Structure probing data (2A3) for a 177-nucleotide construct. The reactions ran in a buffer of 150 mM KOAc, 10 mM MgCl2 and 150 mM bicine (pH 8.5), at 24 C. The data come from the RNA Mapping Database (RMDB), library OK1LIB. As a SHAPE reagent, 2A3 marks flexible, mostly unpaired nucleotides at the ribose 2'-OH. For 2A3 the reverse transcriptase was SuperScript II with manganese.
RNA sequence: GGGAACGACUCGAGUAGAGUCGAAAAAACGGGGCUACCACUCGAAAAGAUUCUUUGCCAACUAUUUUGAUGUUAUUGACCCAUCUCAAGGGUAUGAGAAAUAUGUGAUUAGAGAGAAUCCAAAUGGGAGAGUCCGUGAAUUCGUUCACGGACUCUCAAAAGAAACAACAACAACAAC
Reactivity to 2A3 in 0.01 (KOAc 150mM, MgCl2 10mM, bicine 150mM(pH8.5), 24C), signal-to-noise 2, nucleotides 027 to 126: a000a000c070g000g000g010g050c030u120a080c040c000a020c000u060c000g040a060a060a060a060g030a000u040u000c000u100u070u040g150c090c020a000a030c000u000a020u000u040u010u070g040a050u060g050u300u150a230u120u090g140a150c100c000c000a060u120c170u180c250a140a060g070g000g050u020a150u070g030a020g000a010a090a000u220a130u290g080u030g020a120u000u250a060g030a010g000a000g000a040a000u000c020c020a000a000a120u120g000g070